[RMDB]
RNA sequence: GGGAACGACUCGAGUAGAGUCGAAAACUUGGAGGAGAUGGUAUCGUUGAUGAGGCGCGAUCGUGAAUUUGCGGAAAAGAUAGUACAUACAUCACCGUUCGAUGUAACGUGCGAAUAUCUAUCCUACGACAGGUACCGCUUGGUGAAGCUGAUCAACCGUUGGUUAACCUUUCGAGGUUAACCAACGAAAAGAAACAACAACAACAAC
Reactivity to 2A3 in 0.01 (KOAc 150mM, MgCl2 10mM, bicine 150mM(pH8.5), 24C), signal-to-noise 1, nucleotides 027 to 156: c000u030u090g040g000a000g000g010a050g020a030u110g020g020u030a020u090c040g020u020u000g080a120u070g010a080g040g000c040g040c020g070a080u020c020g020u030g150a080a080u000u140u250g020c090g000g020a000a180a000a000g000a000u020a020g000u010a010c010a000u020a000c010a000u020c060a000c140c140g140u130u140c090g000a000u000g000u000a050a030c150g000u000g000c000g070a140a010u070a020u090c000u020a040u050c000c000u070a100c010g070a040c030a070g000g010u040a020c000c000g060c090u000u040g000g000u050g020a010a060g020c030u030g030a030u020c000a000a000c050
Structure probing data (2A3) for a 207-nucleotide construct. Source: RMDB library OK3TST, as collected in RNAgym. The reactions ran in a buffer of 150 mM KOAc, 10 mM MgCl2 and 150 mM bicine (pH 8.5), at 24 C. Values cover nucleotides 27 to 156. The 2A3 profile rests on 722 reads.